Source: RMDB library OK2TST, as collected in RNAgym.
This 177-nucleotide RNA was probed chemically with DMS and 2A3.
[RMDB]
RNA sequence: GGGAACGACUCGAGUAGAGUCGAAAAUCACACUCUGUAGAUUUGAACAGCUUUCAGAAGGUGAUGGGAUAAGAAAAUUAACCAAGUCUACUCUGACUCGACUGCUAUAACUUUGGAGCAAGCUGCAAAUACGUAAUAUGUUCGCAUAUUACGUAUUAAAAGAAACAACAACAACAAC
Reactivity to DMS in 0.01 (KOAc 150mM, MgCl2 10mM, bicine 150mM(pH8.5), 24C), signal-to-noise 9, nucleotides 027 to 126: u000c010a030c020a070c030u000c010u000g010u000a030g010a090u000u000u010g010a140a180c250a100g010c030u000u010u000c020a020g010a050a080g000g020u000g010a030u000g010g000g000a120u000a040a060g000a070a060a080a080u000u000a050a140c040c020a070a110g010u000c020u000a050c040u000c020u000g000a060c070u000c030g000a070c070u000g010c040u000a060u010a060a070c080u000u000u000g010g000a060g010c060a050a070g010c060u000g000c130a070
Reactivity to 2A3 in 0.01 (KOAc 150mM, MgCl2 10mM, bicine 150mM(pH8.5), 24C), signal-to-noise 9, nucleotides 027 to 126: u010c000a000c000a010c020u030c010u020g040u040a040g030a210u070u090u230g100a130a040c050a060g020c010u060u200u080c020a040g010a080a020g040g010u020g010a040u070g030g010g030a100u120a170a050g120a100a180a050a050u120u080a040a020c010c010a030a010g030u000c010u020a030c010u010c020u040g080a040c010u000c030g050a040c040u050g030c010u050a040u040a280a090c050u060u070u110g030g000a030g020c020a040a020g040c030u060g010c020a030
For DMS, 48,672 sequencing reads were counted.